[RMDB]
Structure probing data (DMS and 2A3) for a 177-nucleotide construct. For 2A3 the reverse transcriptase was SuperScript II with manganese.
RNA sequence: GGGAACGACUCGAGUAGAGUCGAAAAACGUCGAAUAUCUGGUUUGCAAAGCCCUCACCUUCGACGGCGCGCUUCGCCCCAGCGCCGCAGAGCUGCUUUGUUUGCCGCUGUUUCAACAGAAAUGACCAUUAGUCAGAUCCUUCGGGAUCUGACUAAUAAAAGAAACAACAACAACAAC
Reactivity to DMS in 0.01 (KOAc 150mM, MgCl2 10mM, bicine 150mM(pH8.5), 24C), signal-to-noise 2, nucleotides 027 to 126: a120c090g010u000c050g020a030a010u010a020u020c140u010g000g000u060u010u030g000c030a000a020a020g020c000c300c000u010c110a120c110c130u000u040c080g000a070c010g020g000c010g000c010g020c160u010u000c180g000c050c000c020c100a200g000c000g000c020c020g020c120a060g010a020g010c110u020g000c020u000u000u000g000u000u000u000g020c040c010g020c090u000g000u020u000u000c080a060a070c060a100g000a070a040a100u000g000a060c040c030
Reactivity to 2A3 in 0.01 (KOAc 150mM, MgCl2 10mM, bicine 150mM(pH8.5), 24C), signal-to-noise 4, nucleotides 027 to 126: a000c010g090u010c020g020a100a050u110a070u200c100u200g060g000u040u070u040g030c020a030a020a010g000c000c020c020u020c030a130c040c090u140u190c040g160a170c000g060g000c000g000c000g000c060u120u210c030g060c000c000c000c010a030g000c000g000c000c040g020c020a010g010a010g020c090u020g000c000u080u030u020g030u000u000u110g030c000c000g030c030u010g030u030u090u030c070a110a080c020a050g110a120a180a100u160g020a050c060c000

DMS adducts were read by reverse transcription with MarathonRT. For DMS, 2,165 sequencing reads were counted. The data come from the RNA Mapping Database (RMDB), library OK1LIB. In probing experiments dimethyl sulfate is read out at A N1 and C N3, which are open when not base-paired.